This 177-nucleotide RNA was probed chemically with 2A3. Reactivities are rounded to 0.1 and cut off at 0 and 3. It was measured as part of the RMDB library OK1LIB. The reactions ran in a buffer of 150 mM KOAc, 10 mM MgCl2 and 150 mM bicine (pH 8.5), at 24 C. 2A3 adducts were read by reverse transcription with SuperScript II with manganese.
RNA sequence: GGGAACGACUCGAGUAGAGUCGAAAAAUGCCGCAUUCAGAGACGGUAACUCUAGUGGGCAACUGUCUAUCUAGCGUUGACAUCUACAUACUAUAUAGUAAUACCAAUACUCAAGACUACGAAACGGGCCGUACCAGGUAUUCGUACCUGGUACGGCAAAAGAAACAACAACAACAAC
Reactivity to 2A3 in 0.01 (KOAc 150mM, MgCl2 10mM, bicine 150mM(pH8.5), 24C), signal-to-noise 2, nucleotides 027 to 126: a000u070g040c000c010g220c000a100u020u180c090a000g060a000g000a080c000g100g010u090a100a070c010u000c020u000a020g000u020g000g000g040c020a000a150c040u130g030u000c000u000a000u000c000u000a000g100c000g020u040u210g130a030c020a060u020c040u030a010c000a090u100a050c000u070a040u150a080u030a070g130u100a030a030u050a070c080c110a120a040u010a090c020u070c070a070a060g000a010c030u220a120c200g080a000a230a000c040g050g050